[RMDB]
RNA sequence: GGGAACGACUCGAGUAGAGUCGAAAAGAUAUGGAGUGACCAGAGUUGUAUUCGGAAACGAAUAUACAACGACGAAGGUCCUCCUAAGUCAAACUUCGAGAACUUCCUUCGGGAAGUUCUCGAAGAACUGAUUUUAAGAGUUCGCUCUUAAAAUCAGAAAAGAAACAACAACAACAAC
Reactivity to DMS in 0.01 (KOAc 150mM, MgCl2 10mM, bicine 150mM(pH8.5), 24C), signal-to-noise 2, nucleotides 027 to 126: g000a040u000a300u000g000g000a010g040u020g020a010c000c000a070g000a190g010u000u000g000u000a000u010u000c000g000g010a040a080a240c000g000a020a010u030a120u020a070c040a020a020c000g010a160c150g000a210a140g000g000u000c000c000u000c020c000u000a020a090g000u000c030a090a070a200c020u000u000c000g020a040g000a020a010c020u010u000c010c000u000u010c160g000g010g030a010a010g000u000u000c000u000c000g000a000a000g000a050a170
Reactivity to 2A3 in 0.01 (KOAc 150mM, MgCl2 10mM, bicine 150mM(pH8.5), 24C), signal-to-noise 1, nucleotides 027 to 126: g000a000u020a030u120g000g000a030g000u300g030a000c000c010a000g000a000g060u010u030g010u030a010u020u000c020g000g030a030a030a040c010g020a030a010u130a000u050a140c000a000a000c030g300a060c020g050a120a050g000g000u000c000c010u010c000c000u030a120a000g050u030c040a090a080a100c000u010u010c010g010a000g000a020a000c010u000u000c020c030u000u120c300g010g010g000a030a000g000u000u000c000u010c010g020a010a000g020a000a000

Structure probing data (DMS and 2A3) for a 177-nucleotide construct. Values are in units of 0.01, from 0 to 300, in steps of 10. The reactions ran in a buffer of 150 mM KOAc, 10 mM MgCl2 and 150 mM bicine (pH 8.5), at 24 C.